Source information
Structure probing data (2A3 and DMS) for a 177-nucleotide construct. The reactions ran in a buffer of 150 mM KOAc, 10 mM MgCl2 and 150 mM bicine (pH 8.5), at 24 C. The 2A3 profile rests on 2,397 reads. For 2A3 the reverse transcriptase was SuperScript II with manganese.
[RMDB]
RNA sequence: GGGAACGACUCGAGUAGAGUCGAAAAGAAAAAGUCGUCGAGUCCGGAGAAUAUCGAGUAGUGGAUACGAUCCGGAGAGUAGAGACGAAAGUCUCGAUCGACUACAAGAUAUCGAGACGACGAAAAAGGGAAUAUAUUCCUUCGGGAAUAUAUUCCCAAAAGAAACAACAACAACAAC
Reactivity to 2A3 in 0.01 (KOAc 150mM, MgCl2 10mM, bicine 150mM(pH8.5), 24C), signal-to-noise 3, nucleotides 027 to 126: g100a000a140a020a000a010g020u000c010g020u000c000g020a060g110u000c030c000g070g020a050g010a050a030u000a010u020c010g030a020g110u170a020g060u250g230g020a010u010a060c030g040a050u000c010c010g010g010a030g000a000g040u160a030g000a010g000a010c000g040a020a030a000g000u000c000u000c000g000a030u020c000g060a040c010u020a030c030a000a070g010a060u010a020u060c020g000a000g000a030c040g020a000c040g090a060a040a020a020a000
Reactivity to DMS in 0.01 (KOAc 150mM, MgCl2 10mM, bicine 150mM(pH8.5), 24C), signal-to-noise 3, nucleotides 027 to 126: g020a080a080a080a080a130g010u010c010g000u000c030g000a220g010u000c020c000g010g000a050g020a240a110u000a020u000c010g000a150g010u010a050g020u020g000g000a000u000a070c100g000a200u010c000c020g000g000a010g000a100g020u020a070g000a060g010a000c000g000a050a080a100g010u010c000u000c000g010a090u010c050g000a060c140u030a060c180a110a080g000a090u010a130u040c020g000a220g000a000c030g010a030c040g010a020a050a050a090a130